[RMDB]
RNA sequence: GGGAACGACUCGAGUAGAGUCGAAAACUCCAGGUCACGGGCUGCAUCGAAGGUCAGAUGGCGCUUGUUCUUUCGAUUCAGCUGCUUUUCAAAUUCUAAUUUCAGGCGCGACAUCUACGAUAAUCGACAUCCGUGAGGGAUUCGUCCCUCACGGAUGAAAAGAAACAACAACAACAAC
Reactivity to DMS in 0.01 (KOAc 150mM, MgCl2 10mM, bicine 150mM(pH8.5), 24C), signal-to-noise 1, nucleotides 027 to 126: c070u000c000c010a060g010g030u020c020a020c100g030g000g000c040u000g030c090a150u000c020g000a030a110g010g030u010c090a080g000a100u000g000g000c060g010c040u050u000g020u000u000c030u010u000u080c000g000a110u000u030c050a080g020c010u030g000c090u010u000u030u030c080a000a110a130u000u000c150u040a050a150u000u010u000c000a000g000g000c030g030c000g000a010c030a080u040c040u000a060c120g000a030u010a010a030u000c040g000a210
Reactivity to 2A3 in 0.01 (KOAc 150mM, MgCl2 10mM, bicine 150mM(pH8.5), 24C), signal-to-noise 4, nucleotides 027 to 126: c020u000c020c000a020g030g050u060c040a050c080g020g010g000c010u020g000c010a040u030c020g020a030a010g100g010u050c030a040g010a100u090g130g020c010g000c090u070u080g080u190u060c020u010u040u060c030g030a050u060u020c000a030g000c010u040g090c050u180u180u010u080c070a100a070a140u080u040c020u180a060a120u070u030u070c010a000g050g000c000g000c010g050a040c010a080u040c030u140a090c070g140a140u140a250a060u100c020g050a040